Structure probing data (2A3 and DMS) for a 177-nucleotide construct. The RNA was probed in 150 mM KOAc, 10 mM MgCl2 and 150 mM bicine (pH 8.5) at 24 C. Source: RMDB library OK1LIB, as collected in RNAgym. 2A3 adducts were read by reverse transcription with SuperScript II with manganese. DMS adducts were read by reverse transcription with MarathonRT.
RNA sequence: GGGAACGACUCGAGUAGAGUCGAAAAUGGUUCGGAUACGUACAUGAUAAACAUUUAUCACUGGGCGUGUCCCCCUAAACCGCCGGGGCCACUCUAUAGCACGCGCUCCCCGCUGGGGCGAUGGGCCACAUCGGUCGCUGUUCGCGGCGAUCGAUGUAAAAGAAACAACAACAACAAC
Reactivity to 2A3 in 0.01 (KOAc 150mM, MgCl2 10mM, bicine 150mM(pH8.5), 24C), signal-to-noise 8, nucleotides 027 to 126: u080g010g000u060u110c030g000g000a000u000a000c000g000u000a010c000a000u000g000a000u010a000a080a020c110a110u050u030u010a000u000c000a000c070u030g020g030g000c000g000u000g000u000c000c000c000c000c000u010a040a020a010c010c000g000c000c000g010g000g020g000c010c000a050c010u040c010u040a080u050a030g020c020a010c030g030c000g000c010u030c000c000c000c010g050c040u090g000g000g010g000c010g020a040u030g010g000g010c000c000
Reactivity to DMS in 0.01 (KOAc 150mM, MgCl2 10mM, bicine 150mM(pH8.5), 24C), signal-to-noise 9, nucleotides 027 to 126: u020g010g020u000u020c280g010g000a020u000a000c000g010u000a040c000a020u000g000a010u000a000a040a190c290a140u040u010u000a000u000c000a010c200u010g010g000g000c000g000u000g000u000c000c000c000c010c010u010a030a120a120c040c000g010c060c030g000g000g000g000c040c020a070c070u020c070u010a090u020a060g000c050a060c070g000c050g000c050u000c020c010c040c080g010c110u020g000g010g010g010c040g010a070u020g000g000g010c020c080